Conditions: 150 mM KOAc, 10 mM MgCl2 and 150 mM bicine (pH 8.5), 24 C. An RNA of 177 nucleotides, treated with 2A3 and DMS and read out base by base. Reactivities are given for positions 27 through 126. 2A3 adducts were read by reverse transcription with SuperScript II with manganese. The DMS profile rests on 3,842 reads.
RNA sequence: GGGAACGACUCGAGUAGAGUCGAAAAGAUAUGGAUUGCCCAUGGGAGAAGUUCGGAAACGAAAACUUCGAAGAACAUGAGCGCAAUCCUAAGUCAAAAGAGCAAGUUACUUCGGUAACUUGCUCAACUAUCUCAUCAUGUUCGCAUGAUGAGAUAGAAAAGAAACAACAACAACAAC
Reactivity to 2A3 in 0.01 (KOAc 150mM, MgCl2 10mM, bicine 150mM(pH8.5), 24C), signal-to-noise 2, nucleotides 027 to 126: g030a000u080a050u130g010g000a000u000u010g010c000c010c020a020u020g030g000g000a060g000a010a020g000u040u030c030g000g080a080a090a060c020g050a050a030a110a180c030u020u000c030g010a130a000g020a020a020c020a000u060g050a090g150c130g000c100a000a000u000c010c010u010a090a010g060u050c020a030a040a090a160g010a000g000c000a010a010g000u000u010a010c010u050u170c300g030g000u010a000a000c000u000u000g010c010u000c000a000a010
Reactivity to DMS in 0.01 (KOAc 150mM, MgCl2 10mM, bicine 150mM(pH8.5), 24C), signal-to-noise 4, nucleotides 027 to 126: g010a030u010a300u010g010g010a030u000u000g010c000c020c000a020u000g000g000g020a090g000a010a010g010u000u000c020g010g000a110a080a140c020g000a040a060a050a040c020u000u000c000g000a070a130g020a130a190c010a000u000g000a070g000c260g030c010a000a020u000c000c000u000a020a060g010u000c030a080a070a070a120g000a000g010c000a010a010g000u000u010a010c010u000u020c190g020g000u000a010a000c000u000u000g010c010u000c010a000a090

Source: RMDB library TTRDEL, as collected in RNAgym. DMS adducts were read by reverse transcription with MarathonRT.